[RMDB]
Structure probing data (DMS) for a 177-nucleotide construct. It was measured as part of the RMDB library M2PK90. The reactions ran in a buffer of 150 mM KOAc, 10 mM MgCl2 and 150 mM bicine (pH 8.5), at 24 C.
RNA sequence: GGGAACGACUCGAGUAGAGUCGAAAAACAGAGCGAAGGGGGGACGGAGAAGGCUAUGUUGGCCGGGCGACGGUUGUCCCGGUUUAUGCGUGUAGGCUGGUUUUCCAGGCAAAUCCGGAAAAAGAAAUACACACAACAAGUUCGCUUGUUGUGUGUAAAAAGAAACAACAACAACAAC
Reactivity to DMS in 0.01 (KOAc 150mM, MgCl2 10mM, bicine 150mM(pH8.5), 24C), signal-to-noise 1, nucleotides 027 to 126: a090c040a060g020a050g020c030g010a060a030g010g030g030g010g000g020a050c120g010g010a070g000a090a100g000g030c030u000a010u010g030u000u000g020g000c030c000g000g000g020c300g030a090c180g020g000u000u000g000u000c060c020c010g000g010u000u000u010a020u000g000c110g020u000g010u000a050g020g010c020u000g000g000u010u000u010u000c010c030a100g010g010c060a050a070a110u010c020c010g010g010a060a020a030a060a030g010a050a080a120